[RMDB]
RNA sequence: GGGAACGACUCGAGUAGAGUCGAAAAGGGGCCGACCUGGUUUCGACGUGGGUGCGGAAUUGGAGUGGUGCAUGCCGAGCAUCAGUGAGCUCGUAAAUCCAGCUGAAACAAACCAACUGCGAACGACGAACGUUUCGCCCUCGCCGCUUAAACACCGGCCAUCCACAUAGUUCGCUAUGUGGAUGGCAAAAGAAACAACAACAACAAC
Reactivity to 2A3 in 0.01 (KOAc 150mM, MgCl2 10mM, bicine 150mM(pH8.5), 24C), signal-to-noise 1, nucleotides 027 to 156: g000g000g070g000c010c030g040a140c000c030u080g040g110u020u010u120c030g040a040c030g030u010g020g050g090u140g000c000g040g070a040a070u070u170g100g080a020g000u040g010g030u020g010c000a070u140g140c090c000g000a000g010c010a030u090c010a000g060u030g090a000g000c020u000c020g020u170a030a030a030u040c050c020a000g000c040u000g020a090a060a000c120a090a030a080c020c000a010a040c070u060g000c010g020a000a000c010g100a020c020g010a100a000c000g030u010u020u010c000g010c010c000c030u040c000g000c010c010g010c000u060u050a070a010a000c020a050c040c070g020